Source: RMDB library M2RFPK, as collected in RNAgym. Chemical mapping of a 207-nucleotide RNA with 2A3 and DMS. The RNA was probed in 150 mM KOAc, 10 mM MgCl2 and 150 mM bicine (pH 8.5) at 24 C. For 2A3 the reverse transcriptase was SuperScript II with manganese.

[RMDB]
RNA sequence: GGGAACGACUCGAGUAGAGUCGAAAAAGAAUUGUACCACCACUGCGUAUCCUAAACGGGCUCUGCAGUGGUUAUUCUUGUAAAGUACGAGGAGUGAAUAGUGGCCCGUAUUGCAGGCAUUAACAUUAAAAGGCAAUCCACUUCGGUGGAUUGCCAAUCUUUCAGUAAACUUCGGUUUACUGAAAGAAAAAGAAACAACAACAACAAC
Reactivity to 2A3 in 0.01 (KOAc 150mM, MgCl2 10mM, bicine 150mM(pH8.5), 24C), signal-to-noise 2, nucleotides 027 to 156: a000g110a120a050u160u150g050u090a050c020c010a010c000c000a020c000u000g000c000g020u040a140u090c010c000u030a150a110a080c110g000g010g030c030u040c160u220g000c000a010g000u000g000g000u000u000a000u000u000c000u010u020g050u050a060a180a230g060u010a030c040g010a070g090g000a020g050u090g060a080a120u080a140g130u060g060g010c010c020c010g010u020a040u020u120g030c040a010g080g000c030a030u110u160a190a050c000a030u140u190a100a110a000a000g010g050c010a000a000u000c010c000a010c000u040u010c230g030g000u020g010g000a000u000u000g000c000c000a000a000
Reactivity to DMS in 0.01 (KOAc 150mM, MgCl2 10mM, bicine 150mM(pH8.5), 24C), signal-to-noise 2, nucleotides 027 to 156: a060g000a110a090u010u000g010u000a120c070c110a120c010c010a020c020u000g020c010g030u000a090u000c020c020u000a040a130a150c160g000g020g070c040u000c080u030g090c000a020g010u000g010g010u000u000a000u010u000c020u010u010g010u000a110a090a140g020u000a050c040g020a070g020g020a090g000u010g010a110a100u010a080g030u000g030g030c010c000c000g010u000a120u000u000g000c000a050g010g000c060a060u000u010a020a090c070a060u000u010a040a090a130a170g000g010c000a040a000u000c000c000a040c000u000u010c300g000g060u000g000g010a020u000u000g000c000c000a000a010